[RMDB]
RNA sequence: GGGAACGACUCGAGUAGAGUCGAAAAGAUAUGGAGUGAACUACAGCUUGGGUACGCGAAGAACUCGGAAACGAGGGAGCGUACACUUGCUGCACUCCUAAGUCAAACCACCGCUUCGGCGGUGGAACUGUCUCGUAUACUUCGGUAUACGAGACAGAAAAGAAACAACAACAACAAC
Reactivity to DMS in 0.01 (KOAc 150mM, MgCl2 10mM, bicine 150mM(pH8.5), 24C), signal-to-noise 2, nucleotides 027 to 126: g000a080u010a300u010g030g020a030g050u010g000a100a080c090u020a300c000a010g000c010u000u000g000g000g020u000a010c020g020c000g010a090a140g010a060a120c000u000c000g000g000a100a110a230c010g000a010g010g020g000a140g050c000g020u000a000c000a010c020u000u010g030c000u010g010c000a010c000u000c000c000u000a050a060g020u000c020a080a130a210c010c010a010c010c000g010c000u000u000c250g000g000c000g030g000u000g000g000a000a070
Reactivity to 2A3 in 0.01 (KOAc 150mM, MgCl2 10mM, bicine 150mM(pH8.5), 24C), signal-to-noise 2, nucleotides 027 to 126: g020a020u060a060u200g000g000a000g020u000g030a110a040c150u180a050c300a020g010c000u000u010g020g000g000u030a000c010g020c020g140a300a060g000a080a020c000u000c000g010g030a100a060a040c010g000a000g040g010g020a050g000c000g020u020a000c010a010c020u000u020g000c010u000g000c010a000c010u000c000c000u010a100a040g030u000c040a010a050a030c020c010a000c010c020g010c010u070u100c300g190g000c000g000g000u000g000g020a020a020